Structure probing data (DMS and 2A3) for a 177-nucleotide construct. Reactivities are given for positions 27 through 126. It was measured as part of the RMDB library OK2TST.
[RMDB]
RNA sequence: GGGAACGACUCGAGUAGAGUCGAAAAGCUAUAUUGCCUGGCAUUGUCGGGGAGCUGUAUCGACAGUUUGCUGUCACCCUCUCGGCGGCGGUAAUUUUGUCUAGUAUCAAUGCAUUAACCUUAAGCCGACUAAGCUCAAGUUCGCUUGAGCUUAGUCAAAAGAAACAACAACAACAAC
Reactivity to DMS in 0.01 (KOAc 150mM, MgCl2 10mM, bicine 150mM(pH8.5), 24C), signal-to-noise 2, nucleotides 027 to 126: g010c040u000a080u010a100u010u010g020c030c020u000g040g000c020a110u000u000g030u000c120g020g000g020g010a130g020c050u000g020u010a070u000c150g010a020c010a020g010u000u010u000g020c000u000g000u010c040a100c030c030c060u000c180u010c080g010g010c070g000g020c200g000g020u000a010a020u010u000u010u000g000u000c060u030a100g020u030a070u000c110a080a080u000g000c040a090u000u000a080a140c020c020u000u010a150a170g020c120c060
Reactivity to 2A3 in 0.01 (KOAc 150mM, MgCl2 10mM, bicine 150mM(pH8.5), 24C), signal-to-noise 2, nucleotides 027 to 126: g000c030u090a060u040a050u300u190g050c000c010u000g060g010c010a130u020u260g040u090c020g000g000g030g050a020g020c010u070g010u130a080u090c070g000a000c000a000g010u050u120u060g050c020u010g010u020c020a020c030c010c000u070c040u020c080g020g040c030g010g020c000g000g000u030a050a060u060u130u080u090g030u010c050u040a080g020u060a090u130c070a080a040u060g000c030a020u040u080a060a080c010c000u100u100a060a020g030c070c020

The reactions ran in a buffer of 150 mM KOAc, 10 mM MgCl2 and 150 mM bicine (pH 8.5), at 24 C. For 2A3, 1,737 sequencing reads were counted.